Source information:
An RNA of 207 nucleotides, treated with DMS and read out base by base. DMS adducts were read by reverse transcription with MarathonRT. The DMS profile rests on 2,509 reads. Source: RMDB library OK3TST, as collected in RNAgym.
[RMDB]
RNA sequence: GGGAACGACUCGAGUAGAGUCGAAAAUACAAAGAAGCAUUAUACAAGUUGAGAACUCUGCCCAGUGCAUAUUUGUGUGUUUGAGUUAAAACUAAGCCUCUAUAUUAAAGGAAAACCUGAAGCUCAUGUUACAGAAUGAGCACAUAGAAAGUAGGAACACCCUAUGAUAUUUCGAUAUCAUAGGGUGAAAAGAAACAACAACAACAAC
Reactivity to DMS in 0.01 (KOAc 150mM, MgCl2 10mM, bicine 150mM(pH8.5), 24C), signal-to-noise 2, nucleotides 027 to 156: u010a130c050a100a110a120g000a070a130g020c010a080u010u000a210u000a110c060a050a120g050u010u010g000a100g000a090a110c010u000c030u010g020c000c000c030a100g030u010g050c050a130u010a130u000u000u000g010u000g000u010g010u000u000u000g010a080g000u000u000a050a160a040a130c080u000a040a190g040c030c030u000c010u000a090u000a100u000u010a080a110a060g030g000a110a070a090a180c040c010u000g010a130a130g000c020u000c020a010u010g000u000u000a300c100a120g000a050a000u000g010a020g020c000a100c070a040u000a060g010a070a030a050g000u000a070g010g010a020a180